RNA sequence: GGGAACGACUCGAGUAGAGUCGAAAACACUUUCAGAACUGGAACAGAGCCUACAGCUGACAGUACAAACCACAGGGAACUUGAAUUAAAUGGUAGAGAUGUCAAAAUGACAAAAAAAGACAGGCUGAUUAGAGCUAAUCUUCGGAUUAGCUCUAAUAAAAGAAACAACAACAACAAC
Reactivity to 2A3 in 0.01 (KOAc 150mM, MgCl2 10mM, bicine 150mM(pH8.5), 24C), signal-to-noise 1, nucleotides 027 to 126: c020a010c000u000u050u070c030a050g040a300a140c010u030g030g000a120a000c050a050g040a160g110c030c050u010a050c020a040g000c020u020g040a030c000a000g020u040a040c050a000a140a020c000c040a000c030a020g080g000g050a050a070c070u020u070g030a030a050u190u190a140a060a060u040g000g000u040a040g010a020g030a120u060g000u000c020a020a000a170a230u040g010a030c020a010a150a000a000a050a000a050g050a020c020a030g040g000c000u020g000
Reactivity to DMS in 0.01 (KOAc 150mM, MgCl2 10mM, bicine 150mM(pH8.5), 24C), signal-to-noise 3, nucleotides 027 to 126: c090a090c080u000u000u000c050a060g020a080a140c030u000g000g020a070a120c110a130g010a120g030c020c030u000a080c060a080g010c020u010g010a040c050a020g000u020a040c080a080a100a130c040c040a040c100a110g000g020g020a080a050c050u000u000g000a060a070u010u010a080a090a040u010g000g010u010a040g000a100g030a080u000g010u010c000a040a060a110a150u010g010a050c080a010a000a010a050a090a090a070g010a050c090a030g000g010c060u000g010

Chemical mapping of a 177-nucleotide RNA with 2A3 and DMS. Reactivities are given for positions 27 through 126. The 2A3 profile rests on 773 reads.